Background:
The record gives the reactivity of an RNA of 177 nucleotides to DMS and 2A3.
RNA sequence: GGGAACGACUCGAGUAGAGUCGAAAACGUAAAUUCAAAGUGGCGGCACGAAUGGCGAAUAAGCCAACCUAAGGUGAAUUUACUAAUACCGCCAGUAGUAGCAUUUAUGUGAAAAUGUCAAAGGAGCAAUUACAUAGAAAUUCGUUUCUAUGUAAUUAAAAGAAACAACAACAACAAC
Reactivity to DMS in 0.01 (KOAc 150mM, MgCl2 10mM, bicine 150mM(pH8.5), 24C), signal-to-noise 9, nucleotides 027 to 126: c050g010u000a000a010a000u000u000c020a060a110a150g020u000g020g000c030g010g000c100a090c170g020a090a110u000g000g010c020g000a080a060u040a120a290g000c000c000a040a080c210c120u040a120a090g010g010u000g000a130a030u010u000u000a070c020u010a060a080u020a150c000c010g000c010c010a040g000u010a060g010u010a170g010c050a010u000u000u010a030u010g000u020g000a050a040a050a070u010g000u010c070a050a110a090g000g000a110g010c130
Reactivity to 2A3 in 0.01 (KOAc 150mM, MgCl2 10mM, bicine 150mM(pH8.5), 24C), signal-to-noise 9, nucleotides 027 to 126: c010g010u010a000a010a010u050u040c040a070a060a060g130u020g030g000c030g010g020c040a010c130g110a140a120u070g020g000c020g030a090a150u210a230a020g000c010c010a040a090c020c050u090a080a050g070g000u030g030a040a050u060u040u050a030c010u010a040a050u040a110c000c000g010c010c010a020g030u070a010g000u030a010g030c010a010u000u050u040a080u130g090u040g150a050a070a060a080u130g060u140c130a090a060a060g080g020a070g050c010

The DMS profile rests on 27,878 reads. It was measured as part of the RMDB library OK1LIB.